RNA sequence: GGGAACGACUCGAGUAGAGUCGAAAAGAUAUGGAGACAGCUUUUGACGGCUAGGUGUCGGAAACGACAUGCUAGCCGAUAAGCUGCUCCUAAGUCAAACAAGACGUGCGUUCGCGCACGUCUUGAACAUGACAUUCUCGUUCGCGAGAAUGUCAUGAAAAGAAACAACAACAACAAC
Reactivity to DMS in 0.01 (KOAc 150mM, MgCl2 10mM, bicine 150mM(pH8.5), 24C), signal-to-noise 3, nucleotides 027 to 126: g000a040u000a300u010g000g000a020g010a150c000a000g000c000u000u000u000u000g010a180c120g010g010c010u000a010g010g020u000g010u000c000g020g000a090a060a170c010g010a000c000a010u010g020c010u010a010g010c000c000g000a010u000a010a010g020c000u000g010c000u000c000c000u000a000a070g000u000c050a120a110a230c010a000a010g000a030c000g020u000g010c000g010u000u000c220g010c010g000c000a020c000g000u000c010u000u000g010a060a190
Reactivity to 2A3 in 0.01 (KOAc 150mM, MgCl2 10mM, bicine 150mM(pH8.5), 24C), signal-to-noise 1, nucleotides 027 to 126: g030a030u070a050u120g020g000a000g050a090c000a020g030c030u170u060u160u180g270a150c110g010g000c000u000a000g020g000u000g000u010c000g020g000a050a040a070c030g000a000c000a010u030g240c010u000a000g030c030c000g010a000u000a000a000g010c000u010g000c000u000c000c000u010a080a020g040u000c050a100a050a090c000a030a000g010a010c010g000u000g030c010g030u040u120c290g000c010g040c070a000c000g000u020c000u020u010g000a000a000